[RMDB]
RNA sequence: GGGAACGACUCGAGUAGAGUCGAAAAGAGGAUGGCCUUAAAGACCAGCCUGUGGAAAAACUGAUCUAGGAACCCCUGGUUAAAGAUGGCAGACUGGGCCAGGUGCGGUGGCUCAAGCCUGUAAUACCAGCACUUUGGGAAGCCAAGAUGGGCGGAACAGUAUUAGGCUAUUCGUAGCCUAAUACUGAAAAGAAACAACAACAACAAC
Reactivity to DMS in 0.01 (KOAc 150mM, MgCl2 10mM, bicine 150mM(pH8.5), 24C), signal-to-noise 3, nucleotides 027 to 156: g010a060g000g020a050u000g020g020c000c010u000u020a090a120a150g010a020c000c010a040g010c030c000u000g000u010g000g000a110a070a060a070a100c020u010g010a110u000c040u000a120g020g000a090a110c040c020c020c020u000g010g020u000u000a070a090a160g010a110u000g010g010c010a070g000a080c030u010g020g000g040c020c000a040g020g010u000g020c110g010g040u000g020g030c010u010c030a030a160g010c010c010u010g020u000a060a090u010a120c010c010a050g010c070a040c080u000u050u010g000g020g010a110a120g020c010c020a040a100g000a040u000g020g010g030c030g010g000a080a260
Reactivity to 2A3 in 0.01 (KOAc 150mM, MgCl2 10mM, bicine 150mM(pH8.5), 24C), signal-to-noise 4, nucleotides 027 to 156: g090a020g040g010a060u060g010g000c010c000u110u110a140a110a040g070a080c010c000a000g020c010c020u040g030u070g050g030a070a070a010a030a010c040u050g030a070u060c030u090a040g030g040a120a100c010c000c000c050u020g010g010u040u100a060a110a020g050a090u090g050g010c020a000g020a050c030u020g000g020g000c000c010a010g030g020u060g030c070g020g060u030g000g010c010u020c040a040a040g000c000c010u010g040u050a060a060u050a150c010c010a020g010c040a030c040u080u090u020g010g000g020a080a010g010c030c000a020a000g050a050u050g010g000g010c050g000g000a040a020
Chemical mapping of a 207-nucleotide RNA with DMS and 2A3. DMS adducts were read by reverse transcription with MarathonRT. The reactions ran in a buffer of 150 mM KOAc, 10 mM MgCl2 and 150 mM bicine (pH 8.5), at 24 C. As a SHAPE reagent, 2A3 marks flexible, mostly unpaired nucleotides at the ribose 2'-OH. In probing experiments dimethyl sulfate is read out at A N1 and C N3, which are open when not base-paired.